[RMDB]
RNA sequence: GGGAACGACUCGAGUAGAGUCGAAAAUAGAAGACUUGCUGAUGCAGUUGAGCCUCAGGGCUGCAUCGGGACUUUAACUGCGGAUAUGCUCGCCAUCAGUUGUCUGCGACAUCGAUGGGGGCAGAAAAAUCGCCAACUUGGCCAGCAGACUACGCACGAACGACUAGUAGUUCGCUACUAGUCGUUCAAAAGAAACAACAACAACAAC
Reactivity to 2A3 in 0.01 (KOAc 150mM, MgCl2 10mM, bicine 150mM(pH8.5), 24C), signal-to-noise 3, nucleotides 027 to 156: u250a040g100a110a050g040a030c050u110u290g020c010u010g000a000u010g010c000a000g000u010u000g000a000g030c020c000u000c000a020g000g000g000c000u010g000c000a000u020c010g000g000g000a040c070u280u300u290a230a020c000u100g000c000g000g000a000u000a030u010g000c010u010c000g100c020c000a010u000c000a040g020u070u080g000u160c010u040g020c030g010a030c000a050u100c080g000a000u000g000g020g010g000g000c000a000g000a000a020a000a000a000u060c020g000c010c000a130a250c280u170u210g000g000c010c000a000g020c000a000g000a010c000u070a040c080g100c040a060c140